[RMDB]
RNA sequence: GGGAACGACUCGAGUAGAGUCGAAAACUCAUCACAACAAACCCAGAUCUGUGUCCAGCAGUCCUGAUCCAACCAGAGUAUUCGUGCUCUGGUUGUGUUUCGGUUGUUAUUGCUGGACAGCUCGACGUACCUAUACUAUGUUCGCAUAGUAUAGGUAAAAAGAAACAACAACAACAAC
Reactivity to 2A3 in 0.01 (KOAc 150mM, MgCl2 10mM, bicine 150mM(pH8.5), 24C), signal-to-noise 9, nucleotides 027 to 126: c020u040c030a080u160c070a070c060a160a110c060a070a140a090c010c030c020a030g020a160u030c030u080g100u020g030u050c000c000a000g000c000a000g020u010c000c010u010g000a000u000c000c000a000a000c000c000a000g000a000g020u020a070u090u170c260g080u160g020c000u000c000u000g010g000u000u000g000u000g000u000u040u020c000g010g000u020u030g050u090u100a020u020u010g000c000u000g000g010a000c000a000g000c010u060c050g080a070c050g060
Reactivity to DMS in 0.01 (KOAc 150mM, MgCl2 10mM, bicine 150mM(pH8.5), 24C), signal-to-noise 9, nucleotides 027 to 126: c040u000c040a100u020c110a070c100a070a060c100a060a100a140c050c030c030a120g010a080u010c080u010g010u000g010u000c000c000a010g000c010a010g010u000c020c000u000g000a010u000c030c000a000a010c000c000a010g000a010g020u000a050u010u030c240g020u000g010c000u000c000u000g000g000u000u000g000u020g010u010u000u000c020g010g010u010u030g010u020u010a020u000u000g010c000u000g000g000a010c010a010g010c090u000c070g010a170c240g000
An RNA of 177 nucleotides, treated with 2A3 and DMS and read out base by base.
For DMS the reverse transcriptase was MarathonRT.
Conditions: 150 mM KOAc, 10 mM MgCl2 and 150 mM bicine (pH 8.5), 24 C.
Reactivities are rounded to 0.1 and cut off at 0 and 3.